[RMDB]
RNA sequence: GGGAACGACUCGAGUAGAGUCGAAAAGAUAUGGAUCAUGGGGAGCAGAACUGUCGGAAACGACAGAGCUGCGUUGAUCCCGCUGAUCCUAAGUCAAAAGUCGUGUAUCCUUCGGGAUACACGACAAGAGUAUAGAAUUCUUCGGAAUUCUAUACUCAAAAGAAACAACAACAACAAC
Reactivity to DMS in 0.01 (KOAc 150mM, MgCl2 10mM, bicine 150mM(pH8.5), 24C), signal-to-noise 5, nucleotides 027 to 126: g000a030u000a300u020g000g000a010u000c000a020u010g000g000g010g010a050g020c000a010g000a030a040c010u000g000u010c000g010g000a100a070a160c010g010a010c000a010g010a050g020c000u000g010c010g010u010u010g000a100u010c010c000c030g000c120u000g000a020u000c000c010u000a030a110g010u000c040a090a070a130a130g010u000c000g020u000g000u000a000u000c000c000u000u010c160g020g000g000a010u000a000c000a000c000g010a000c000a000a030
Reactivity to 2A3 in 0.01 (KOAc 150mM, MgCl2 10mM, bicine 150mM(pH8.5), 24C), signal-to-noise 3, nucleotides 027 to 126: g020a020u080a040u140g000g000a010u010c030a070u190g010g000g010g030a030g000c000a010g000a090a070c000u010g010u010c000g050g010a080a060a060c010g000a000c000a000g000a020g000c000u010g000c000g020u050u060g010a040u030c000c010c010g040c030u010g010a010u000c000c000u020a170a020g060u030c030a010a070a050a110g010u000c000g000u010g000u010a000u010c000c000u020u080c260g060g000g000a000u000a010c010a000c000g000a000c000a000a010
An RNA of 177 nucleotides, treated with DMS and 2A3 and read out base by base.
Values cover nucleotides 27 to 126.
The RNA was probed in 150 mM KOAc, 10 mM MgCl2 and 150 mM bicine (pH 8.5) at 24 C.